[RMDB]
RNA sequence: GGGAACGACUCGAGUAGAGUCGAAAAGUAUGAUCCUUCGGGAUCAUACAAAUAAACUCGCCUAUAGCGAGGCGAGAACCAAAGCGGCUAAAGCAAUGGAAAAAAUCGGAUACUUCGGUAUCCGAAAGAUAGUCAGUGUGUUCGCACACUGACUAUCAAAAGAAACAACAACAACAAC
Reactivity to 2A3 in 0.01 (KOAc 150mM, MgCl2 10mM, bicine 150mM(pH8.5), 24C), signal-to-noise 2, nucleotides 027 to 126: g000u000a000u010g010a020u000c000c000u030u080c200g120g000g000a000u000c010a000u000a000c000a000a020a000u080a010a020a000c000u000c000g010c020c010u100a110u150a190g190c130g070a010g030g000c000g000a010g030a000a000c020c010a000a000a010g010c020g100g000c120u270a130a020a020g000c010a030a080u080g000g000a010a130a000a000a000a030u010c000g010g010a000u010a000c000u020u100c250g090g000u010a010u020c000c000g000a000a000a000
Reactivity to DMS in 0.01 (KOAc 150mM, MgCl2 10mM, bicine 150mM(pH8.5), 24C), signal-to-noise 2, nucleotides 027 to 126: g000u000a000u000g030a000u000c010c010u000u000c240g020g000g000a000u000c000a030u020a000c000a030a050a070u010a120a030a130c040u000c000g010c000c010u000a110u000a220g000c190g040a040g030g030c000g010a010g020a130a210c010c000a020a030a300g000c010g040g000c160u010a040a090a280g010c030a020a210u000g010g030a010a020a100a060a060a150u000c010g010g020a010u000a000c010u020u000c220g060g030u010a000u000c000c000g000a000a000a030